Structure probing data (DMS and 2A3) for a 177-nucleotide construct.
The reactions ran in a buffer of 150 mM KOAc, 10 mM MgCl2 and 150 mM bicine (pH 8.5), at 24 C.
RNA sequence: GGGAACGACUCGAGUAGAGUCGAAAAUUCUACACACCGGCCACCGACGGCGCGACGUUCACCGCAAUUGCCCAACGCUGCAACCAACAGUUCGGCGGCCGGUUCACCAUUGCGCAGGUCAGCUUGCGUGACAUACCUAGUUCGCUAGGUAUGUCACAAAAGAAACAACAACAACAAC
Reactivity to DMS in 0.01 (KOAc 150mM, MgCl2 10mM, bicine 150mM(pH8.5), 24C), signal-to-noise 3, nucleotides 027 to 126: u010u010c020u000a090c110a180c160a080c000c030g000g020c000c000a020c010c020g000a010c090g030g010c180g010c020g010a070c070g000u000u000c090a100c060c080g000c060a120a100u000u010g010c010c030c050a080a090c040g030c010u000g000c050a090a100c100c070a070a120c110a070g010u010u000c010g010g030c030g010g010c010c000g000g000u010u000c050a050c040c050a070u000u000g000c070g010c040a040g000g000u010c120a090g020c040u000u000g000c150
Reactivity to 2A3 in 0.01 (KOAc 150mM, MgCl2 10mM, bicine 150mM(pH8.5), 24C), signal-to-noise 2, nucleotides 027 to 126: u010u000c010u070a050c060a000c000a000c080c000g000g030c000c000a010c000c010g020a010c040g020g040c030g030c010g080a030c000g040u050u200c080a090c180c000g000c060a080a190u180u160g030c040c000c010a030a050c020g000c030u040g000c010a070a110c050c010a010a050c000a040g040u160u060c000g020g000c030g010g010c050c010g020g000u010u010c020a020c000c010a060u020u200g010c030g010c050a030g010g090u080c020a020g030c050u020u020g030c000

2A3 adducts were read by reverse transcription with SuperScript II with manganese.